[RMDB]
An RNA of 207 nucleotides, treated with DMS and 2A3 and read out base by base. Values cover nucleotides 27 to 156. Source: RMDB library OK3TST, as collected in RNAgym. Conditions: 150 mM KOAc, 10 mM MgCl2 and 150 mM bicine (pH 8.5), 24 C.
RNA sequence: GGGAACGACUCGAGUAGAGUCGAAAAUGGAACAAGAAGGCCAUGUGUUGUGAAAACAGAAACAAGCAUGUUACCCUGAGUGCUUGAGGAGAGUUUGACUCCAAGCAUGUCACUGGGCCUGCCUCUGUACCCUCUCCAUGCAUGUAACUCCACAACAGCCAUUGAAUUAAUUCGUUAAUUCAAUGGCAAAAGAAACAACAACAACAAC
Reactivity to DMS in 0.01 (KOAc 150mM, MgCl2 10mM, bicine 150mM(pH8.5), 24C), signal-to-noise 3, nucleotides 027 to 156: u010g020g040a070a170c080a090a160g020a070a050g010g030c020c040a080u000g030u000g010u000u000g020u010g000a100a090a090a240c090a150g000a100a070a090c030a070a110g020c030a050u010g030u000u010a140c040c040c020u000g000a300g010u000g010c020u020u000g010a100g010g000a070g010a080g020u000u000u010g000a160c020u000c000c000a040a070g010c000a040u000g000u000c030a050c090u000g020g030g050c020c010u000g000c020c000u010c030u010g000u000a050c020c020c020u000c040u000c040c020a030u000g000c020a090u010g000u000a050a090c050u000c030c000a080c080a100a060c070a180
Reactivity to 2A3 in 0.01 (KOAc 150mM, MgCl2 10mM, bicine 150mM(pH8.5), 24C), signal-to-noise 5, nucleotides 027 to 156: u060g020g000a070a030c040a060a090g130a030a030g060g010c000c000a050u020g030u000g020u020u060g060u040g030a110a110a050a030c050a050g100a040a150a000c020a030a000g000c000a010u090g010u120u170a060c010c000c010u030g010a010g010u000g000c000u040u050g060a050g120g020a040g000a020g030u060u220u260g090a110c010u000c010c000a000a000g020c010a010u090g090u220c010a030c200u040g020g000g000c000c030u010g010c000c010u010c020u020g030u070a090c000c020c000u020c000u000c000c010a040u060g040c010a030u040g020u070a060a030c020u030c030c030a070c030a080a080c020a040